[RMDB]
RNA sequence: GGGAACGACUCGAGUAGAGUCGAAAAUAUGCCCCACUCUACAGGGGGAUGUAGAGGCACUGAGGCACAAAGGUGAAGGGACUUGCAUAGGGCUGCUGGGUUAGAGAGUCACAGAGCCAAGCUGUGGGCCUGCUAGGCUUUCCAACCACCCUGGAGGCGAUGCCUAGUCAUUCGUGACUAGGCAUCGAAAAGAAACAACAACAACAAC
Reactivity to 2A3 in 0.01 (KOAc 150mM, MgCl2 10mM, bicine 150mM(pH8.5), 24C), signal-to-noise 1, nucleotides 027 to 156: u300a060u120g070c000c000c030c000a080c000u000c010u050a010c060a050g000g000g070g000g010a000u060g000u030a030g000a050g020g000c050a040c130u110g020a090g010g030c050a030c140a070a050a000g170g010u050g040a040a010g030g000g000a050c030u010u110g000c070a050u180a160g000g030g010c030u100g000c010u050g040g000g030u020u020a000g010a000g010a030g050u000c010a050c000a300g070a000g000c000c030a020a060g070c070u160g100u120g130g010g000c000c000u000g000c070u040a040g010g000c000u010u000u030c000c010a030a000c000c010a030c000c090c010u010g000g030a030g090g000
Conditions: 150 mM KOAc, 10 mM MgCl2 and 150 mM bicine (pH 8.5), 24 C. The record gives the reactivity of an RNA of 207 nucleotides to 2A3. It was measured as part of the RMDB library OK3TST.